[RMDB]
RNA sequence: GGGAACGACUCGAGUAGAGUCGAAAAACUGGCAGCAACCCUGGCAGGGACAGGGGCAAGGGCCUGGGGAGUGGAACAAUGUGCUUUGUGUGCGCUGGCCAUGGUGGGGCUGGCUCUUGAAAUUUCCCUAGAAUAAGCUGGAGCCCAGGGGCAGAGAGCCUGAUUUAUUAUUCGUAAUAAAUCAGGCAAAAGAAACAACAACAACAAC
Reactivity to 2A3 in 0.01 (KOAc 150mM, MgCl2 10mM, bicine 150mM(pH8.5), 24C), signal-to-noise 1, nucleotides 027 to 156: a000c040u040g080g010c000a000g040c020a080a130c000c000c020u000g050g070c090a060g000g040g030a050c060a060g000g000g010g000c030a040a020g030g000g020c030c080u070g010g000g000g020a090g040u040g010g050a050a010c030a090a120u160g070u040g030c020u010u140u180g090u040g050u120g030c070g010c020u040g020g040c000c030a000u090g060g000u040g010g000g030g000c040u030g010g010c000u010c000u030u070g030a090a100a160u070u040u030c020c000c010u010a020g060a060a040u170a060a040g010c040u040g070g040a020g000c030c000c000a000g000g000g000g000c000a040g110a010g020a000